[RMDB]
RNA sequence: GGGAACGACUCGAGUAGAGUCGAAAACAAGGGGACAUCAGUGCCUCUCAGGAAAGUAGCAGCUUGGAAUAGAAUCUGGCAUGCCUAAGGCCUUUGGGGAACUGGGAUGCUUAUUUCCUCUGCCUUCGAAGAGAUGUUUGUUCGCAAACAUCUCUUCAAAAGAAACAACAACAACAAC
Reactivity to DMS in 0.01 (KOAc 150mM, MgCl2 10mM, bicine 150mM(pH8.5), 24C), signal-to-noise 2, nucleotides 027 to 126: c140a100a040g030g010g000g000a060c070a170u020c220a100g020u020g000c010c000u000c020u000c090a050g010g010a040a040a030g000u010a150g010c030a000g000c210u000u000g040g000a020a040u000a130g010a170a130u000c140u010g000g000c000a050u000g020c010c000u010a070a100g000g000c000c050u000u000u030g000g010g010g000a040a040c060u010g000g000g000a100u000g000c060u000u010a110u000u000u010c000c010u000c020u010g010c030c060u000u000c230
Reactivity to 2A3 in 0.01 (KOAc 150mM, MgCl2 10mM, bicine 150mM(pH8.5), 24C), signal-to-noise 1, nucleotides 027 to 126: c060a030a030g020g000g000g000a000c010a120u170c040a080g040u050g210c000c010u000c000u000c010a000g120g050a170a030a000g070u100a000g000c030a020g000c000u180u170g020g030a040a020u110a150g130a070a040u050c050u040g020g010c030a090u060g120c020c010u030a050a000g090g000c020c000u060u170u160g170g030g000g000a040a010c000u020g000g000g080a040u010g000c000u090u070a090u050u020u040c000c000u020c000u000g020c040c030u090u120c110